[RMDB]
RNA sequence: GGGAACGACUCGAGUAGAGUCGAAAAAGGUGGCAUUUAAAACCCAUUCCUUGCUGGACCUGGUAGAGACGCCCCCAGUCCGUCAGGUCUCUCGCUGCAGUUCCGCAGUUUGACCGCAGGGGACGGACUACUCUACUAGAUUCGUCUAGUAGAGUAGAAAAGAAACAACAACAACAAC
Reactivity to 2A3 in 0.01 (KOAc 150mM, MgCl2 10mM, bicine 150mM(pH8.5), 24C), signal-to-noise 8, nucleotides 027 to 126: a000g100g020u070g030g020c080a070u100u130u300a080a120a060a070c020c000c000a010u030u030c000c000u010u020g010c030u070g020g000a010c010c000u010g040g010u080a190g060a030g010a090c020g080c010c010c000c000c000a000g000u000c000c000g010u000c000a000g000g000u000c000u010c000u000c020g010c010u010g000c000a100g060u270u110c060c090g000c010a010g000u030u080u120g060a050c020c040g000c020a020g000g020g000g000a000c020g010g010a000
Reactivity to DMS in 0.01 (KOAc 150mM, MgCl2 10mM, bicine 150mM(pH8.5), 24C), signal-to-noise 9, nucleotides 027 to 126: a070g010g020u000g010g010c080a100u010u000u010a070a060a120a140c130c010c020a140u000u000c010c010u000u000g010c040u000g010g000a030c040c010u000g000g010u000a090g010a130g010a050c050g000c050c020c010c010c020a300g000u000c000c010g000u000c010a040g010g010u000c020u000c110u000c250g010c010u000g000c000a160g010u000u010c200c130g000c010a020g010u000u000u000g010a090c200c090g000c060a050g010g000g000g010a020c060g000g010a190